[RMDB]
RNA sequence: GGGAACGACUCGAGUAGAGUCGAAAACGUAGCUGGUUCGCCAGCUACGAAAAAGCGUACUACCUAGCGUUUGACGUGGCAUGGGAGUCCCAAAUAGGACAUCGAUCAUGGCCACCGAGCUAGGUAUCGCAAAAAGGAACCACUUCGGUGGUUCCAACCCCUGUGCUUUGUUCGCAAAGCACAGGGGAAAAGAAACAACAACAACAAC
Reactivity to 2A3 in 0.01 (KOAc 150mM, MgCl2 10mM, bicine 150mM(pH8.5), 24C), signal-to-noise 2, nucleotides 027 to 156: c000g000u000a000g000c000u010g040g030u000u030c150g300c070c000a000g010c000u020a000c000g020a000a000a000a010a000g000c010g050u070a130c050u050a000c020c000u000a000g000c070g020u190u160u110g070a050c100g010u000g000g000c000a010u000g000g000g050a050g010u030c050c030c020a260a300a100u300a050g000g000a010c060a200u190c100g030a010u090c050a010u090g300g100c000c060a000c000c020g000a000g000c000u020a000g000g000u000a000u000c000g000c000a050a030a000a000a000g040g000a030a020c070c000a000c000u040u070c210g110g000u010g000g000u000u040c000c000a010a040